[RMDB]
The record gives the reactivity of an RNA of 207 nucleotides to DMS and 2A3. The data come from the RNA Mapping Database (RMDB), library M2RFPK. The RNA was probed in 150 mM KOAc, 10 mM MgCl2 and 150 mM bicine (pH 8.5) at 24 C.

RNA sequence: GGGAACGACUCGAGUAGAGUCGAAAAAUACACCAGCAGUAGGACUCAGCGACCGUCACAACAGGGUUGUGCUGGUAUCCGACGGUCGUAUAGCCCUGUCUUGCAGGUUGCCUUGCACUGACGUGCCACACCAUUUACAGAUUCGUCUGUAAAUGAAACCUAAGUCAGGUUUCGACCUGACUUAGGUAAAAGAAACAACAACAACAAC
Reactivity to DMS in 0.01 (KOAc 150mM, MgCl2 10mM, bicine 150mM(pH8.5), 24C), signal-to-noise 2, nucleotides 027 to 156: a120u000a070c050a250c050c000a110g030c020a040g030u020a060g030g020a030c010u000c100a250g010c000g010a000c000c020g030u010c000a300c060a050a070c000a110g000g040g020u000u020g030u000g040c050u000g010g020u000a070u000c130c010g040a070c020g060g020u000c030g020u000a050u010a020g020c010c000c010u010g020u010c050u000u010g000c010a130g020g010u010u010g000c040c120u000u000g010c010a080c060u000g010a140c150g000u000g020c050c060a120c080a160c130c010a010u000u000u000a010c000a010g000a030u000u000c300g020u000c000u000g010u010a000a000a010u000g010a050a080
Reactivity to 2A3 in 0.01 (KOAc 150mM, MgCl2 10mM, bicine 150mM(pH8.5), 24C), signal-to-noise 3, nucleotides 027 to 156: a010u150a010c060a020c020c000a010g000c000a000g010u080a030g010g010a050c020u030c100a000g020c000g000a000c010c000g000u000c020a030c040a180a210c040a110g000g000g090u150u090g040u130g070c010u000g010g030u020a070u020c040c020g000a000c000g000g000u020c010g000u070a100u050a010g020c010c000c000u010g100u070c040u040u060g000c020a010g020g010u060u130g070c000c000u090u080g010c030a040c050u130g070a040c110g030u020g010c020c030a110c010a020c050c010a000u000u000u000a000c000a010g000a010u040u050c100g050u030c090u000g000u000a010a000a000u000g000a090a030
Annotation: 2A3 adducts were read by reverse transcription with SuperScript II with manganese. As a SHAPE reagent, 2A3 marks flexible, mostly unpaired nucleotides at the ribose 2'-OH.